This 207-nucleotide RNA was probed chemically with 2A3. The 2A3 profile rests on 700 reads. It was measured as part of the RMDB library OK3TST.
RNA sequence: GGGAACGACUCGAGUAGAGUCGAAAACGGGCAUGAACGUGGUGGUCGAGCUGCAGGACAGAAACACCGAGCUUAGCUACCAGUACAUGCUGGCCGACAUGAUGAGCAGACACCACUACUUUGCCCUCUGGAACCAGGCCGUGGACUCUUACGACCAGCUCUAAUCCGGAUUCGUCCGGAUUAGAGCAAAAGAAACAACAACAACAAC
Reactivity to 2A3 in 0.01 (KOAc 150mM, MgCl2 10mM, bicine 150mM(pH8.5), 24C), signal-to-noise 2, nucleotides 027 to 156: c070g000g000g010c030a030u100g090a090a100c130g020u030g000g030u060g000g060u150c100g030a060g000c000u070g010c020a190g050g050a100c060a060g150a080a220a010c050a050c070c000g020a000g000c010u130u220a000g010c000u020a060c030c050a010g020u100a090c000a010u050g000c000u000g040g000c040c050g060a050c030a060u200g030a030u100g000a040g000c020a000g070a010c000a000c040c010a000c010u080a030c050u100u020u060g010c000c020c000u010c000u040g000g010a000a000c020c000a000g010g000c060c010g010u030g020g070a060c070u000c010u130u120a010c050g040a020c030c020a000